[RMDB]
RNA sequence: GGGAACGACUCGAGUAGAGUCGAAAAAGCACCAAAGAUGCCAUCCCCGUCUUUGACAACUUGUGGUCGCAAGGUGCCAUUUCUGAGCCUGUUUUUGCCUUCUACUUGAGCAAAAGCAAUCCGGAGGUAAGCAAAACCAGUUCGCUGGUUUUGCUUAAAAAGAAACAACAACAACAAC
Reactivity to DMS in 0.01 (KOAc 150mM, MgCl2 10mM, bicine 150mM(pH8.5), 24C), signal-to-noise 1, nucleotides 027 to 126: a080g030c030a010c030c010a020a090a100g010a090u000g000c030c040a150u010c020c010c020c300g000u010c050u000u010u020g000a040c080a060a130c050u000u010g010u010g010g040u000c070g000c030a010a070g000g010u000g000c020c030a100u000u000u010c030u000g010a160g030c080c050u010g040u000u000u000u000u000g010c020c020u010u000c110u010a080c110u000u000g010a110g020c030a030a030a070a080g010c040a040a070u020c070c090g010g000a020g000g010

An RNA of 177 nucleotides, treated with DMS and read out base by base. The RNA was probed in 150 mM KOAc, 10 mM MgCl2 and 150 mM bicine (pH 8.5) at 24 C. DMS adducts were read by reverse transcription with MarathonRT. Values cover nucleotides 27 to 126.